[RMDB]
RNA sequence: GGGAACGACUCGAGUAGAGUCGAAAACUGGCUGACCUGGACAGGCUCUUGAGAACCGCCUUGGAGUCGCAGUGACCCGCCUUGCAGUCUUUUGCGACGGGGGCAGAGUAGGAUCCGGCUCUCACGGGCCGUAGGAAUGUUUCGACAUUCCUACGGCAAAAGAAACAACAACAACAAC
Reactivity to DMS in 0.01 (KOAc 150mM, MgCl2 10mM, bicine 150mM(pH8.5), 24C), signal-to-noise 2, nucleotides 027 to 126: c030u000g010g010c000u000g000a070c070c030u000g010g000a090c140a110g000g010c000u000c040u010u010g010a060g010a050a130c020c040g010c020c020u000u000g020g000a100g000u010c020g000c050a100g000u010g000a090c020c060c020g000c030c050u000u010g000c050a070g000u000c040u000u000u010u010g000c070g010a020c010g000g010g010g000g010c010a050g000a120g000u010a060g010g000a250u010c100c070g010g000c040u000c020u010c050a100c190g010g010
Reactivity to 2A3 in 0.01 (KOAc 150mM, MgCl2 10mM, bicine 150mM(pH8.5), 24C), signal-to-noise 1, nucleotides 027 to 126: c000u010g090g000c040u060g050a090c040c010u100g040g060a020c050a120g040g050c000u000c010u050u150g050a020g020a080a100c040c000g030c010c030u050u030g120g010a110g000u010c000g030c060a040g040u040g090a040c000c000c030g030c010c040u050u180g150c020a100g060u000c060u050u300u300u150g070c060g020a010c000g020g010g000g010g000c020a000g000a000g020u120a040g090g000a040u040c040c000g020g000c000u000c020u000c020a000c050g080g000